Record summary: Structure probing data (2A3 and DMS) for a 177-nucleotide construct. 2A3 adducts were read by reverse transcription with SuperScript II with manganese. The 2A3 profile rests on 1,618 reads. The DMS profile rests on 3,644 reads.

[RMDB]
RNA sequence: GGGAACGACUCGAGUAGAGUCGAAAAGAAGCUACGAAAAAUCUCAGAGAGAGAAAAAUGAGAUGAACGUGUUAGGCGAAACUCUCUCGACGCCGAAAGUACGAAGUGCACACGGAAAAGUAGCGAAGGGUUCAUACUAGUUCGCUAGUAUGAACCCAAAAGAAACAACAACAACAAC
Reactivity to 2A3 in 0.01 (KOAc 150mM, MgCl2 10mM, bicine 150mM(pH8.5), 24C), signal-to-noise 2, nucleotides 027 to 126: g140a080a060g000c000u000a000c000g100a090a000a020a000a060u000c000u010c000a010g010a030g010a010g000a000g080a090a120a050a120a010u100g000a000g020a020u060g050a110a010c000g010u020g040u090u120a020g000g000c010g040a070a040a040c030u000c000u000c000u010c060g030a030c010g000c000c000g040a000a100a000g040u040a050c150g150a140a010g060u030g060c000a030c000a000c040g010g050a020a080a000a000g030u000a010g000c030g040a060a010
Reactivity to DMS in 0.01 (KOAc 150mM, MgCl2 10mM, bicine 150mM(pH8.5), 24C), signal-to-noise 2, nucleotides 027 to 126: g030a170a120g000c000u010a000c000g020a010a150a020a100a100u000c000u000c000a030g000a090g010a020g030a030g000a040a070a020a100a080u030g000a040g000a000u000g010a100a130c000g010u010g020u020u000a080g010g030c000g010a060a110a090c070u000c010u000c010u000c020g010a180c030g000c000c010g000a070a070a100g000u000a050c100g020a110a070g030u010g020c100a090c050a010c030g020g000a050a080a100a130g030u000a030g000c000g000a090a080